[RMDB]
RNA sequence: GGGAACGACUCGAGUAGAGUCGAAAACAGAAGCCUUUGCAGCCUCGCAAGAGUUUGGCGCGACAGUAAAGAAUGCCUGGAUGCAAGUCAGCGACGCUGGCAACACUUUCGAAUUGCGGGGACGUCCUUAGAGCUCAGUUCUACCAACCAGUGAGGGGAUAAUAUCCCAGUUCGCUGGGAUAUUAUCAAAAGAAACAACAACAACAAC
Reactivity to DMS in 0.01 (KOAc 150mM, MgCl2 10mM, bicine 150mM(pH8.5), 24C), signal-to-noise 2, nucleotides 027 to 156: c040a130g010a090a100g030c010c030u000u000u010g020c030a110g020c030c010u000c020g030c020a060a100g000a150g020u010u010u010g030g010c000g040c030g000a140c070a090g010u000a060a070a130g010a130a080u000g020c030c020u000g010g030a080u000g030c020a060a130g010u000c060a070g020c000g010a100c170g000c050u010g000g030c010a100a040c100a040c020u000u010u000c020g000a100a220u000u000g020c020g000g000g020g000a080c040g020u010c060c020u010u000a080g000a140g030c020u000c020a130g020u000u010c000u000a100c030c010a070a110c030c020a060g000u000g020a120g040g010g000
Reactivity to 2A3 in 0.01 (KOAc 150mM, MgCl2 10mM, bicine 150mM(pH8.5), 24C), signal-to-noise 4, nucleotides 027 to 156: c040a030g170a130a010g030c000c010u020u040u090g060c070a050g030c020c000u010c030g000c020a030a040g040a030g090u040u140u150g060g000c040g020c020g060a030c040a040g050u150a050a140a040g070a100a050u110g010c000c020u070g060g050a050u080g030c040a070a070g020u030c030a020g030c040g120a090c180g020c060u020g000g000c000a070a030c030a040c060u070u090u080c050g040a190a100u040u030g010c000g000g000g010g030a020c020g070u070c010c010u010u030a020g000a020g030c020u030c040a030g000u040u000c010u030a120c010c020a090a040c020c000a030g040u040g090a070g000g030g020